[RMDB]
Annotation: The record gives the reactivity of an RNA of 177 nucleotides to DMS and 2A3. Conditions: 150 mM KOAc, 10 mM MgCl2 and 150 mM bicine (pH 8.5), 24 C.
RNA sequence: GGGAACGACUCGAGUAGAGUCGAAAACUGUACACAAUAUUGCUUGGAGACACCUCAUUCCACAUAAUCCUUCUUGAGGUCCUGGAUUGCAUGUUAGAGGGCAGUGACAAUAUCUUGUCCUUGGCCACUUGGUCUGAAAGUUCGCUUUCAGACCAAGAAAAGAAACAACAACAACAAC
Reactivity to DMS in 0.01 (KOAc 150mM, MgCl2 10mM, bicine 150mM(pH8.5), 24C), signal-to-noise 3, nucleotides 027 to 126: c040u010g010u010a060c120a150c080a060a080u010a060u000u010g000c050u010u010g020g020a120g020a080c100a060c030c010u010c060a100u010u020c060c010a100c120a090u010a090a100u000c020c010u000u020c070u010u010g000a110g010g000u010c050c080u000g000g000a070u000u000g020c070a040u000g010u000u000a100g010a050g010g020g010c000a030g010u010g000a070c030a060a030u010a300u000c060u010u000g010u000c000c010u000u010g030g010c000c050a230
Reactivity to 2A3 in 0.01 (KOAc 150mM, MgCl2 10mM, bicine 150mM(pH8.5), 24C), signal-to-noise 2, nucleotides 027 to 126: c020u050g100u240a040c120a000c020a130a090u100a100u220u210g030c020u050u100g040g010a090g010a030c000a050c030c020u060c030a030u030u060c040c020a100c000a080u180a140a060u070c000c000u040u130c020u040u110g070a010g000g030u000c000c000u100g050g010a120u070u160g020c040a040u030g100u140u120a040g000a050g080g010g030c000a040g050u050g050a030c040a080a050u090a100u120c060u040u020g010u000c000c000u020u040g070g020c020c000a070